This 177-nucleotide RNA was probed chemically with DMS and 2A3. For DMS, 4,474 sequencing reads were counted. 2A3 adducts were read by reverse transcription with SuperScript II with manganese. The reactions ran in a buffer of 150 mM KOAc, 10 mM MgCl2 and 150 mM bicine (pH 8.5), at 24 C.
RNA sequence: GGGAACGACUCGAGUAGAGUCGAAAAUCUUGCUGAGUUUGAUCUCCUCUUCUGAGGCAUCCUCUGUAGGGAAGAAGACAAACAGCCUUUGCUACUCAAAGUGUGGUUGGUGGCCCCACAGCAGGAGCGUCAUCUAGAGAUUCGUCUCUAGAUGACGAAAAGAAACAACAACAACAAC
Reactivity to DMS in 0.01 (KOAc 150mM, MgCl2 10mM, bicine 150mM(pH8.5), 24C), signal-to-noise 4, nucleotides 027 to 126: u010c010u000u000g010c020u000g000a120g000u000u000u010g000a120u000c010u000c010c010u010c010u000u000c060u010g000a030g010g020c250a130u010c060c020u000c020u010g010u000a040g010g020g010a010a040g000a070a080g010a130c020a040a010a010c030a160g020c040c020u000u000u000g000c090u000a030c090u020c120a060a070a120g010u000g010u000g000g010u000u010g020g030u000g000g000c050c030c020c040a180c020a040g020c040a020g010g000a050g020
Reactivity to 2A3 in 0.01 (KOAc 150mM, MgCl2 10mM, bicine 150mM(pH8.5), 24C), signal-to-noise 4, nucleotides 027 to 126: u020c000u020u040g000c010u020g040a060g080u000u080u060g110a150u040c000u000c030c010u050c000u070u020c030u060g040a020g040g010c100a210u200c010c010u030c010u040g040u070a030g000g000g020a040a090g030a030a010g080a050c020a010a050a000c000a020g010c010c010u090u150u140g000c020u030a070c020u010c170a130a150a090g100u100g000u010g050g060u050u060g030g080u040g050g030c000c000c000c000a010c000a000g010c010a000g050g000a010g040

DMS adducts were read by reverse transcription with MarathonRT.